An RNA of 177 nucleotides, treated with DMS and 2A3 and read out base by base.
2A3 adducts were read by reverse transcription with SuperScript II with manganese.
The RNA was probed in 150 mM KOAc, 10 mM MgCl2 and 150 mM bicine (pH 8.5) at 24 C.
The data come from the RNA Mapping Database (RMDB), library M2PK50.
DMS adducts were read by reverse transcription with MarathonRT.
DMS (dimethyl sulfate) methylates the pairing face of unpaired adenines and cytosines.

[RMDB]
RNA sequence: GGGAACGACUCGAGUAGAGUCGAAAACGCUGAAGGUUCGCCUUCAGCGAAAAGCUAGAAAACGAUCAAAACUAGCAAUAACAUAAAUAAAGAUCGAUAUAAAAACGGGGAGCUUCGGCUCCCCGAAGAUGAUUAUUAUGUUCGCAUAAUAAUCAUCAAAAGAAACAACAACAACAAC
Reactivity to DMS in 0.01 (KOAc 150mM, MgCl2 10mM, bicine 150mM(pH8.5), 24C), signal-to-noise 2, nucleotides 027 to 126: c010g030c000u000g020a000a010g020g040u000u000c270g040c000c000u000u000c000a020g000c000g010a030a050a050a150g000c020u000a000g000a020a030a210a150c000g010a010u000c010a060a040a040a030c020u000a000g000c000a070a100u010a120a100c070a060u000a000a010a060u020a050a150a180g000a000u000c000g000a300u020a060u010a060a080a060a130a070c010g010g000g010g000a010g010c020u000u020c200g030g010c000u000c000c000c020c000g000a000a020
Reactivity to 2A3 in 0.01 (KOAc 150mM, MgCl2 10mM, bicine 150mM(pH8.5), 24C), signal-to-noise 3, nucleotides 027 to 126: c010g010c000u000g000a000a010g030g020u030u040c050g110c000c010u000u000c000a000g010c000g010a000a000a000a000g000c000u010a000g020a020a050a010a060c020g010a020u010c010a010a070a000a040c010u010a010g030c020a040a060u170a060a010c010a030u220a090a110a020u060a030a050a040g000a000u010c000g010a000u050a010u030a300a180a020a020a010c020g000g020g020g000a000g000c000u080u090c150g120g000c000u010c010c010c000c000g000a000a010